[RMDB]
RNA sequence: GGGAACGACUCGAGUAGAGUCGAAAAUGGUUAAUGGAUUAUGCAGUUCCUUUGCUUCUUUACCACUUAUCUUUUGAGUUUUUGUCAAAGAUUUUAUCCCAAAAACCAGUCUGAAGAAGGAGGAAGAGUUGCAUACCUAGUUCGCUAGGUAUGCAACAAAAGAAACAACAACAACAAC
Reactivity to DMS in 0.01 (KOAc 150mM, MgCl2 10mM, bicine 150mM(pH8.5), 24C), signal-to-noise 1, nucleotides 027 to 126: u010g000g020u020u010a070a090u000g000g000a110u000u010a090u010g020c070a150g010u000u000c010c010u000u000u000g010c060u010u000c010u000u010u010a110c080c040a090c090u030u000a070u000c010u010u000u000u000g000a020g000u000u000u030u020u000g010u010c050a040a030a040g000a060u000u000u010u010a100u000c010c000c010a030a070a030a120a050c070c040a050g020u020c100u000g000a010a020g000a020a110g000g010a030g000g000a040a090g000a140
Reactivity to 2A3 in 0.01 (KOAc 150mM, MgCl2 10mM, bicine 150mM(pH8.5), 24C), signal-to-noise 1, nucleotides 027 to 126: u040g030g000u020u050a080a010u120g070g010a120u110u110a040u300g060c040a060g030u040u080c020c000u010u020u160g130c020u050u040c000u060u000u020a030c020c020a080c050u050u040a020u000c010u040u090u040u050g020a020g080u180u060u030u300u230g070u050c020a010a000a010g010a020u020u000u000u100a030u010c030c000c000a030a020a000a010a010c050c020a040g050u030c050u070g000a060a040g000a000a000g030g010a010g000g010a070a040g110a000